[RMDB]
RNA sequence: GGGAACGACUCGAGUAGAGUCGAAAACCUGUUGACUUCGGUCAACAGGAAAAGGUGGAUGCUACGCUACCGAAGUAGCAAAAGUGCAGAAGGAACGCUCAAAAACUUAUCCGUUCGCGGAUAAGAAACACUAGUCGAUGUUCGCAUCGACUAGUGUAAAAGAAACAACAACAACAAC
Reactivity to DMS in 0.01 (KOAc 150mM, MgCl2 10mM, bicine 150mM(pH8.5), 24C), signal-to-noise 2, nucleotides 027 to 126: c000c000u010g020u000u000g000a020c010u000u020c280g040g000u000c000a000a000c000a000g000g020a040a030a120a110g000g020u000g000g000a180u000g000c020u000a030c080g010c030u000a150c020c110g000a070a130g000u000a010g000c000a070a010a020a060g020u000g000c060a050g000a070a040g000g000a010a100c130g000c030u020c130a070a040a030a210a110c000u000u000a000u000c000c000g010u000u010c270g050c030g020g000a020u030a020a000g000a030a050
Reactivity to 2A3 in 0.01 (KOAc 150mM, MgCl2 10mM, bicine 150mM(pH8.5), 24C), signal-to-noise 2, nucleotides 027 to 126: c000c000u000g030u000u000g010a000c020u040u050c300g160g000u010c000a000a010c000a000g040g040a030a090a000a030g100g030u080g020g030a100u080g030c020u010a020c020g000c020u040a040c000c040g050a110a000g010u060a000g000c020a050a020a050a050g160u110g060c030a040g050a090a010g090g010a090a030c030g020c030u030c070a040a030a060a050a080c020u000u000a010u010c000c020g010u010u050c250g010c000g080g000a000u000a000a000g030a020a070
Structure probing data (DMS and 2A3) for a 177-nucleotide construct. For DMS, 1,353 sequencing reads were counted. For DMS the reverse transcriptase was MarathonRT. The RNA was probed in 150 mM KOAc, 10 mM MgCl2 and 150 mM bicine (pH 8.5) at 24 C. It was measured as part of the RMDB library M2PK50.